[RMDB]
RNA sequence: GGGAACGACUCGAGUAGAGUCGAAAAAAGGAAUAAGGGUGAGAGGGGAUCUCUCCCCCCUCUGAUUGGCUGUUAGUAAGCUGGGAAACUUAUCAGUAACAGAACAAUCAGUAUGAUGACCUGGUGCAUGAGGAACGAACUUCGGUUCGUUCCUCAUAAAAGAAACAACAACAACAAC
Reactivity to 2A3 in 0.01 (KOAc 150mM, MgCl2 10mM, bicine 150mM(pH8.5), 24C), signal-to-noise 1, nucleotides 027 to 126: a000a000g210g000a060a050u150a020a120g010g060g000u050g000a000g000a020g030g130g040g070a120u060c030u000c010u000c010c000c000c000c010c000u000c000u000g000a000u000u000g080g000c000u010g010u000u000a000g110u000a090a000g010c030u020g100g000g000a020a020a020c000u000u040a030u130c030a040g050u000a000a000c000a000g030a140a000c000a000a000u000c000a000g000u000a100u100g090a020u180g020a030c000c000u100g000g090u100g030c010
The record gives the reactivity of an RNA of 177 nucleotides to 2A3. Conditions: 150 mM KOAc, 10 mM MgCl2 and 150 mM bicine (pH 8.5), 24 C. It was measured as part of the RMDB library RFM100. For 2A3, 599 sequencing reads were counted. Values cover nucleotides 27 to 126. 2A3 adducts were read by reverse transcription with SuperScript II with manganese.